[RMDB]
Chemical mapping of a 177-nucleotide RNA with 2A3 and DMS.

RNA sequence: GGGAACGACUCGAGUAGAGUCGAAAAUGUCCAGAAAGAGGAAGGCCGUUAUGCCGGUGCCCGGCGUCGUCGCGGUGAAGGUGCGGGUCCAGACGCCGCCGGCCUGCGUCCAGGUGGAGCCCUGGGCUAAUCGUAAGAGCUUCGGCUCUUACGAUUAAAAAGAAACAACAACAACAAC
Reactivity to 2A3 in 0.01 (KOAc 150mM, MgCl2 10mM, bicine 150mM(pH8.5), 24C), signal-to-noise 1, nucleotides 027 to 126: u160g020u000c000c000a030g120a030a120a010g140a020g020g080a040a020g060g000c000c000g040u110u140a110u200g020c000c010g000g000u060g050c040c040c000g020g010c000g000u010c010g020u030c020g020c040g080g080u160g100a070a060g050g050u140g010c020g060g020g010u020c010c010a030g000a010c000g010c000c000g000c000c000g000g000c000c010u020g020c030g000u000c000c010a040g070g000u110g090g090a040g040c000c000c000u020g010g000g000c030
Reactivity to DMS in 0.01 (KOAc 150mM, MgCl2 10mM, bicine 150mM(pH8.5), 24C), signal-to-noise 3, nucleotides 027 to 126: u070g000u010c000c010a100g020a070a070a060g010a090g010g000a140a110g000g000c020c020g030u030u000a070u020g010c030c010g010g000u010g020c170c070c010g000g010c020g000u000c030g000u000c020g020c120g030g020u020g010a120a100g010g010u010g000c020g000g000g000u000c030c030a150g010a050c040g000c040c010g000c010c000g000g010c030c030u000g030c060g020u020c000c000a010g010g020u020g000g010a120g010c090c010c010u010g000g010g010c050
For DMS the reverse transcriptase was MarathonRT. Source: RMDB library OK1LIB, as collected in RNAgym. Values cover nucleotides 27 to 126. For 2A3, 1,998 sequencing reads were counted.